[RMDB]
RNA sequence: GGGAACGACUCGAGUAGAGUCGAAAAUAAAGGGUCAAAAGGUAUCAUCGAUGCAUGCUUGCAUGCAAUUCGAUGUAUACCUUAGUGACCCGCACUACACUGAGAAAGUAGCAAUUUACUAUGCGAACUGAUACGGGAAGUUCGCUUCCCGUAUCAGAAAAGAAACAACAACAACAAC
Reactivity to 2A3 in 0.01 (KOAc 150mM, MgCl2 10mM, bicine 150mM(pH8.5), 24C), signal-to-noise 1, nucleotides 027 to 126: u140a000a080a000g000g000g000u010c000a090a000a000a000g020g000u000a000u010c000a000u000c010g000a000u000g020c010a000u000g020c010u080u120g030c010a000u020g040c010a010a120u090u010c000g000a000u000g010u000a000u000a000c000c000u030u000a000g000u010g000a000c000c000c000g000c000a000c000u100a030c040a040c070u090g070a000g080a170a110a010g060u060a000g000c010a020a010u050u190u140a170c090u090a060u140g050c010g020a090a030
Reactivity to DMS in 0.01 (KOAc 150mM, MgCl2 10mM, bicine 150mM(pH8.5), 24C), signal-to-noise 2, nucleotides 027 to 126: u020a120a080a120g020g000g000u010c000a050a040a050a000g000g020u000a010u000c000a000u000c000g020a020u000g000c000a000u000g010c030u010u000g030c010a000u000g000c000a040a100u000u000c000g000a010u000g000u040a010u000a000c010c000u000u010a010g000u000g000a010c000c000c000g040c190a050c090u000a010c040a050c090u000g000a150g000a150a090a080g000u000a040g010c070a060a070u000u000u020a080c120u010a050u000g000c050g010a040a160